[RMDB]
Structure probing data (DMS and 2A3) for a 177-nucleotide construct. 2A3 adducts were read by reverse transcription with SuperScript II with manganese. For DMS, 1,003 sequencing reads were counted. It was measured as part of the RMDB library M2PK50.
RNA sequence: GGGAACGACUCGAGUAGAGUCGAAAAUCAUGUUUAUUCGUAAACAUGAAACCCCGCACGGCGCGCCUGGCCACCAGGGAACGUGGAUAUGGAAGCCUGAGAAUGAGGUGCCGUUCGCGGCACCUAAAGAAUUGGAAUGGUUCGCCAUUCCAAUUCUAAAAGAAACAACAACAACAAC
Reactivity to DMS in 0.01 (KOAc 150mM, MgCl2 10mM, bicine 150mM(pH8.5), 24C), signal-to-noise 1, nucleotides 027 to 126: u000c000a020u000g000u000u010u000a010u000u000c110g010u000a000a000a040c000a000u010g000a000a110a160c060c000c010c070g000c070a110c060g000g010c000g020c020g000c020c010u010g020g020c010c000a040c040c070a070g000g010g030a050a060c110g040u000g000g000a050u010a130u000g010g000a080a090g020c020c010u000g010a130g000a120a090u000g010a020g010g020u000g000c000c010g030u000u010c170g010c010g000g030c010a030c030c020u000a000a050
Reactivity to 2A3 in 0.01 (KOAc 150mM, MgCl2 10mM, bicine 150mM(pH8.5), 24C), signal-to-noise 1, nucleotides 027 to 126: u000c010a020u010g000u000u010u020a080u010u080c090g050u030a000a020a000c000a010u000g030a050a050a000c030c000c000c010g050c010a040c050g020g000c000g000c020g060c020c020u040g050g020c000c010a020c040c030a110g100g000g090a020a060c030g020u030g020g030a080u050a050u170g020g040a050a000g010c000c020u070g050a050g110a150a140u210g080a010g000g000u000g000c000c000g010u040u030c210g010c050g060g000c000a020c010c000u020a040a080